[RMDB]
RNA sequence: GGGAACGACUCGAGUAGAGUCGAAAAUUCUUGGCUACUCUUGCUAAUUCAUAUAUCUCCGCUUUAGUCGAGGGGUUCAUGGUGUUUCAAGGUAUCCAUAUUAUCUACGGGGAUUGUGGUUUUAUUCCUUAUUCUAUACUUGGGCGCAUACAAGGAAUGUAACAAGUCUUUUCGAAGACUUGUUACAAAAAGAAACAACAACAACAAC
Reactivity to DMS in 0.01 (KOAc 150mM, MgCl2 10mM, bicine 150mM(pH8.5), 24C), signal-to-noise 2, nucleotides 027 to 156: u000u000c030u010u020g030g000c020u000a070c060u010c020u000u000g000c030u000a090a100u000u020c040a090u000a140u000a120u010c000u000c010c000g000c030u000u000u010a100g020u000c060g000a100g020g020g020g020u000u000c070a100u000g040g030u000g000u000u000u000c050a080a080g030g030u000a080u000c000c060a050u000a120u020u000a060u010c040u000a160c080g030g000g010g010a050u000u020g020u000g010g020u000u000u000u020a070u020u000c020c010u000u000a130u010u010c100u020a100u000a060c010u010u010g020g020g030c100g000c080a070u000a000c010a040a080g030g010a080a160
Reactivity to 2A3 in 0.01 (KOAc 150mM, MgCl2 10mM, bicine 150mM(pH8.5), 24C), signal-to-noise 3, nucleotides 027 to 156: u040u010c020u030u010g010g030c010u050a040c020u060c010u130u070g030c030u050a060a050u090u090c040a040u110a030u020a090u140c020u050c050c030g040c070u120u090u110a090g070u150c020g030a060g010g030g010g010u010u020c070a080u060g010g010u070g060u030u070u070c050a050a020g020g010u030a040u000c000c010a030u040a100u200u050a070u060c050u050a030c070g020g020g000g040a030u040u060g000u030g060g000u000u120u050u050a050u030u040c010c000u000u050a130u220u000c070u080a140u060a240c030u030u040g000g030g000c060g000c060a070u110a120c030a010a010g190g000a050a140